Structure probing data (2A3 and DMS) for a 177-nucleotide construct. Reactivities are given for positions 27 through 126. High DMS reactivity at an A or C suggests that its Watson-Crick edge is free. The 2A3 profile rests on 2,681 reads. The DMS profile rests on 1,351 reads. For 2A3 the reverse transcriptase was SuperScript II with manganese. Conditions: 150 mM KOAc, 10 mM MgCl2 and 150 mM bicine (pH 8.5), 24 C. DMS adducts were read by reverse transcription with MarathonRT.

RNA sequence: GGGAACGACUCGAGUAGAGUCGAAAAGAAACCAUUCGUUUUGGAUAACAACAUCAUUAUGGCUCCGCUGCCCAUUCUUGCCCAUGUUGAAACGGCCAACCGAUUAACAACCUUGCUGGAUGGUCAGGGUCAUAUGUAGGUUCGCCUACAUAUGACCAAAAGAAACAACAACAACAAC
Reactivity to 2A3 in 0.01 (KOAc 150mM, MgCl2 10mM, bicine 150mM(pH8.5), 24C), signal-to-noise 3, nucleotides 027 to 126: g020a020a070a000c000c000a030u080u110c100g060u050u040u080u120g140g020a100u090a150a040c040a040a000c010a060u080c020a020u090u150a120u190g030g000c020u020c040c020g010c070u020g000c000c000c050a020u070u000c000u030u080g020c000c040c030a090u060g050u050u060g070a150a100a020c040g010g000c000c020a040a060c010c010g050a080u070u110a060a060c030a030a050c020c020u040u130g000c050u080g020g040a050u030g030g020u020c020a040g040
Reactivity to DMS in 0.01 (KOAc 150mM, MgCl2 10mM, bicine 150mM(pH8.5), 24C), signal-to-noise 2, nucleotides 027 to 126: g010a150a110a150c010c020a050u010u010c080g030u000u010u000u000g000g000a050u010a060a070c090a040a090c070a030u000c020a090u000u000a040u000g010g030c040u000c040c050g000c020u000g000c110c010c060a040u020u000c020u020u000g030c020c050c080a070u020g000u000u010g010a040a090a120c090g000g020c050c090a090a080c040c010g030a130u000u020a050a070c090a090a100c080c060u000u000g010c050u030g020g020a060u000g000g000u000c060a110g000